[RMDB]
RNA sequence: GGGAACGACUCGAGUAGAGUCGAAAAGAUAUGGAGGGUCCAUUGAGCGAAGAACUUAGUCGGAAACGACUAAGGGAGCUCCAAUGGAGCCCUCCUAAGUCAAAAGACAUUGGUUCGCCAAUGUCAACCAUCCUAUGUGGUUCGCCACAUAGGAUGGAAAAGAAACAACAACAACAAC
Reactivity to 2A3 in 0.01 (KOAc 150mM, MgCl2 10mM, bicine 150mM(pH8.5), 24C), signal-to-noise 1, nucleotides 027 to 126: g000a030u130a040u230g020g000a000g000g000g020u000c000c000a010u010u010g010a010g060c020g280a300a010g000a110a000c000u000u000a000g000u000c020g000g050a050a100a090c010g000a010c020u000a000a000g000g000g000a000g010c010u080c130c040a030a030u000g000g020a020g040c010c010c040u020c000c000u020a010a010g000u010c020a110a000a000a070g000a000c000a020u000u000g100g030u040u170c300g080c060c010a000a000u040g000u000c010a000a030
Reactivity to DMS in 0.01 (KOAc 150mM, MgCl2 10mM, bicine 150mM(pH8.5), 24C), signal-to-noise 2, nucleotides 027 to 126: g010a090u000a300u010g010g010a020g030g010g000u000c000c000a000u000u020g010a070g020c010g010a120a170g010a170a150c000u000u000a000g000u000c000g020g000a090a130a210c000g000a050c000u000a020a000g020g010g010a040g000c000u000c110c210a000a010u010g010g010a100g030c000c000c010u010c010c000u000a000a120g010u040c050a080a100a140a120g010a020c020a010u000u000g000g010u000u000c280g000c020c000a000a010u010g000u010c000a110a110
An RNA of 177 nucleotides, treated with 2A3 and DMS and read out base by base. 2A3 adducts were read by reverse transcription with SuperScript II with manganese. For DMS the reverse transcriptase was MarathonRT. Conditions: 150 mM KOAc, 10 mM MgCl2 and 150 mM bicine (pH 8.5), 24 C.